[RMDB]
RNA sequence: GGGAACGACUCGAGUAGAGUCGAAAAUAAUCAGGCCAUAAUGCCAAAUUUCUUUACUUCGGAAGGAUCUUUAUGGUGAUGGUUUCAGAAAGAAAUUAAAGCAGAGUAACAGUGGUUAGCAAUAAUGACGAUGUACCAGAUUCGUCUGGUACAUCGUAAAAGAAACAACAACAACAAC
Reactivity to 2A3 in 0.01 (KOAc 150mM, MgCl2 10mM, bicine 150mM(pH8.5), 24C), signal-to-noise 1, nucleotides 027 to 126: u180a020a060u060c030a030g130g000c020c030a070u060a100a060u100g020c020c010a080a000a030u050u100u000c020u020u080u060a300c040u050u040c050g110g000a020a010g040g020a020u070c000u100u210u090a120u150g140g090u050g060a100u030g040g140u010u090u070c070a000g020a050a080a000g030a020a110a010u110u010a180a070a000g020c020a000g010a030g100u040a070a050c020a040g010u000g010g000u030u030a020g000c020a050a090u110a170a110u150g050
Reactivity to DMS in 0.01 (KOAc 150mM, MgCl2 10mM, bicine 150mM(pH8.5), 24C), signal-to-noise 2, nucleotides 027 to 126: u020a030a090u000c060a030g020g040c040c050a090u000a070a060u000g020c060c060a130a060a070u000u010u010c020u000u000u000a100c070u020u030c200g030g000a020a030g000g010a010u000c000u000u000u010a090u010g000g000u000g010a130u000g020g010u000u000u010c060a080g000a070a030a040g010a000a050a020u000u010a030a090a100g010c030a010g000a050g020u010a040a120c100a100g020u000g000g000u000u000a040g020c090a060a080u010a030a130u010g000
The record gives the reactivity of an RNA of 177 nucleotides to 2A3 and DMS. 2A3 adducts were read by reverse transcription with SuperScript II with manganese. Conditions: 150 mM KOAc, 10 mM MgCl2 and 150 mM bicine (pH 8.5), 24 C. The DMS profile rests on 1,368 reads.